RNA sequence: GGGAACGACUCGAGUAGAGUCGAAAAAACGUUGCAUGAUCGUAAAACAUGCCCGGCUUACCGUGAGCCGCCUUUGAAAGAAUGGUUUACACGGACUCUGUUGCGUUACGCACGUACCUAACUUGUGAAAACGGCAUCUUGUUCGCAAGAUGCCGAAGUUGCUCUCCUAGUUCGCUAGGAGAGCAACAAAAGAAACAACAACAACAAC
Reactivity to 2A3 in 0.01 (KOAc 150mM, MgCl2 10mM, bicine 150mM(pH8.5), 24C), signal-to-noise 2, nucleotides 027 to 156: a000a000c000g000u010u000g000c000a000u020g000a040u180c040g030u150a070a080a000a150c000a010u000g000c010c010c010g000g000c000u030u060a100c020c000g020u000g000a000g000c000c000g000c000c030u060u050u020g120a100a030a020g050a020a020u110g000g020u030u050u040a000c000a010c000g110g000a150c030u070c070u230g130u120u040g010c030g010u040u060a050c190g000c040a010c010g000u070a060c000c050u080a070a130c030u120u060g030u050g160a070a090a000a020c000g000g000c010a000u000c000u000u020g010u060u060c190g000c080a000a000g000a000u020g030c000c000g000a000a000